[RMDB]
RNA sequence: GGGAACGACUCGAGUAGAGUCGAAAAGAUAUGGAAUUAGGUCACCAUGUCAUCAGGAGCCUUGGAUUUAAUGUCGGAAACGACAUUUGUCAGGCUUAGAUGAGCAUGGUGACCUAAUUCCUAAGUCCAGAAAGAUACUCUUCGGAGUAUCUUUCUGAAAAGAAACAACAACAACAAC
Reactivity to DMS in 0.01 (KOAc 150mM, MgCl2 10mM, bicine 150mM(pH8.5), 24C), signal-to-noise 2, nucleotides 027 to 126: g010a070u000a300u010g010g000a030a010u000u010a000g010g010u000c000a020c000c000a010u000g010u010c000a020u010c000a110g000g000a020g010c000c000u000u020g040g000a030u000u020u000a010a000u000g000u010c000g020g000a130a110a300c010g010a010c000a010u000u000u010g000u000c000a040g010g000c010u010u000a050g000a000u000g010a150g010c000a000u000g020g020u000g000a000c000c000u000a000a000u000u010c000c000u000a020a080g000u010c060